[RMDB]
RNA sequence: GGGAACGACUCGAGUAGAGUCGAAAAGCUGAAAGCUUCGGCUUUCAGCAAAGAAAAAGAUGUACAGCUUCUAUGGUACAUCAAGAAUAGAAGCGAAAAGAAAAAGCUUAACGUUCGCGUUAAGCAAGGUUAGUAUUACCUUCGGGUAAUACUAACCAAAAGAAACAACAACAACAAC
Reactivity to 2A3 in 0.01 (KOAc 150mM, MgCl2 10mM, bicine 150mM(pH8.5), 24C), signal-to-noise 3, nucleotides 027 to 126: g010c000u000g020a010a000a010g000c000u040u090c180g070g010c000u010u000u000c000a000g000c000a000a040a010g050a000a140a020a010a010g070a050u130g030u120a040c030a060g020c030u040u010c030u080a040u070g050g010u040a050c020a080u100c050a030a020g090a060a040u080a010g030a030a030g040c040g050a040a080a020a070g130a020a100a020a020a010g000c000u010u000a010a000c000g020u030u060c280g000c000g050u000u000a000a000g000c020a010a000
Reactivity to DMS in 0.01 (KOAc 150mM, MgCl2 10mM, bicine 150mM(pH8.5), 24C), signal-to-noise 2, nucleotides 027 to 126: g000c000u000g010a000a000a000g000c000u000u010c240g020g030c000u000u000u000c000a010g020c000a020a040a070g000a080a100a110a110a070g000a030u000g010u000a040c020a250g000c020u000u000c020u010a080u010g030g010u010a010c050a010u000c050a060a090g010a140a070u000a030g000a030a000g000c010g000a070a050a100a100g030a070a100a050a100a140g000c000u000u000a000a000c000g000u000u010c200g020c000g000u000u000a000a000g040c000a020a010